[RMDB]
RNA sequence: GGGAACGACUCGAGUAGAGUCGAAAAUCUUAGGAGUUCGCUCCUAAGAAAAGGGCGAGGCCGAGCCAGCUCUUCGGAGCAAUACUCGGCCAGUCACUCAGAAUGCGCUACCCUUCGGGGUAGCGAAUCCUACUGCUCUAUUCGUAGAGCAGUAGGAAAAAGAAACAACAACAACAAC
Reactivity to 2A3 in 0.01 (KOAc 150mM, MgCl2 10mM, bicine 150mM(pH8.5), 24C), signal-to-noise 2, nucleotides 027 to 126: u000c010u000u000a010g000g000a010g000u050u090c140g110c050u000c000c010u010a000a010g000a000a020a000a010g030g010g040c030g100a220g050g030c010c010g020a000g030c050c060a090g000c010u000c000u000u030c160g160g000a010g020c000a010a000u080a120c000u000c010g000g010c010c000a010g010u000c000a020c020u070c030a040g120a180a090u200g060c010g000c020u000a000c000c000c030u010u080c230g050g010g020g000u000a000g000c000g000a000a000
Reactivity to DMS in 0.01 (KOAc 150mM, MgCl2 10mM, bicine 150mM(pH8.5), 24C), signal-to-noise 3, nucleotides 027 to 126: u000c000u000u000a010g000g000a000g010u010u020c230g010c000u000c000c010u000a010a010g000a000a040a110a080g000g000g000c020g000a110g040g010c010c020g000a020g000c050c120a300g000c000u000c000u010u000c150g010g010a000g000c000a040a110u000a060c000u000c000g000g000c000c010a030g030u010c010a070c030u000c080a160g010a080a120u010g020c010g000c000u000a010c000c000c000u000u010c220g000g010g010g010u000a000g010c000g010a010a020
Chemical mapping of a 177-nucleotide RNA with 2A3 and DMS. The reactions ran in a buffer of 150 mM KOAc, 10 mM MgCl2 and 150 mM bicine (pH 8.5), at 24 C. For 2A3 the reverse transcriptase was SuperScript II with manganese. For 2A3, 2,008 sequencing reads were counted.